[RMDB]
The record gives the reactivity of an RNA of 207 nucleotides to 2A3.
The reactions ran in a buffer of 150 mM KOAc, 10 mM MgCl2 and 150 mM bicine (pH 8.5), at 24 C.
High 2A3 reactivity points to a flexible backbone, as in loops and unpaired stretches.
Reactivities are given for positions 27 through 156.
RNA sequence: GGGAACGACUCGAGUAGAGUCGAAAAGCAUCGACGACGGUCCUGCCAUGAGACCGUAACGAGGACAUGUCGCCUCGAAUGGCGUCUGGGAGCCGGCAGCUUACCCCAAGGAUGAGCGCCUAAUGCCUAUACCCGAUUCGCUUCGGCGAAUCGGGAACGUUAGAGCUUACUUCGGUAAGCUCUAACGAAAAGAAACAACAACAACAAC
Reactivity to 2A3 in 0.01 (KOAc 150mM, MgCl2 10mM, bicine 150mM(pH8.5), 24C), signal-to-noise 2, nucleotides 027 to 156: g000c010a100u090c010g140a160c000g050a000c020g060g000u000c000c000u040g180c060c010a180u240g040a120g000a170c010c000g010u020a010a020c000g000a000g010g000a020c040a100u250g060u170c060g020c040c000u000c030g080a060a090u070g010g000c000g020u030c090u060g070g000g000a000g010c000c000g030g120c030a020g010c020u050u130a080c000c000c010c040a060a040g010g020a090u130g050a020g040c030g000c000c020u050a080a030u080g030c000c030u090a100u140a200c000c010c000g000a040u000u010c000g000c000u050u000c180g150g000c000g060a000a000u020c000g020g000g030a000a000